[RMDB]
RNA sequence: GGGAACGACUCGAGUAGAGUCGAAAAUGUGGAUGAUGUGAUUGUCCUGGAAAUCGAGGUGAAAGGCUCAGUAGAACCUUUCCAGGUUCUCUUAGAGCCAUAUGCCCUCAUCAUCCCAGGGGAGAACGAAGUUAAAUCAUUUCGAUGAUUUAACUUCAAAAGAAACAACAACAACAAC
Reactivity to 2A3 in 0.01 (KOAc 150mM, MgCl2 10mM, bicine 150mM(pH8.5), 24C), signal-to-noise 7, nucleotides 027 to 126: u120g030u140g010g000a010u020g000a000u010g080u060g070a070u070u090g060u090c010c010u020g070g090a060a070a040u130c110g030a110g000g020u080g060a130a070a050g010g000c000u000c010a100g000u120a000g060a000a010c000c000u080u180u100c070c050a010g010g000u000u000c010u000c010u020u080a060g000a000g000c000c000a000u000a000u020g030c000c000c000u010c000a000u000c000a000u000c000c010c010a000g020g000g010g010a130g020a080a020c100
Reactivity to DMS in 0.01 (KOAc 150mM, MgCl2 10mM, bicine 150mM(pH8.5), 24C), signal-to-noise 9, nucleotides 027 to 126: u010g030u020g020g010a010u000g000a020u000g000u000g010a070u000u000g000u010c010c000u000g020g000a120a030a030u010c090g010a090g000g010u010g000a100a260a090g010g010c000u000c000a050g010u010a020g010a010a010c000c000u000u010u020c300c300a060g010g010u000u000c000u000c030u000u000a130g010a010g010c000c010a020u010a020u010g000c040c010c300u000c020a010u000c020a010u000c010c000c010a140g000g000g000g010a160g010a080a120c210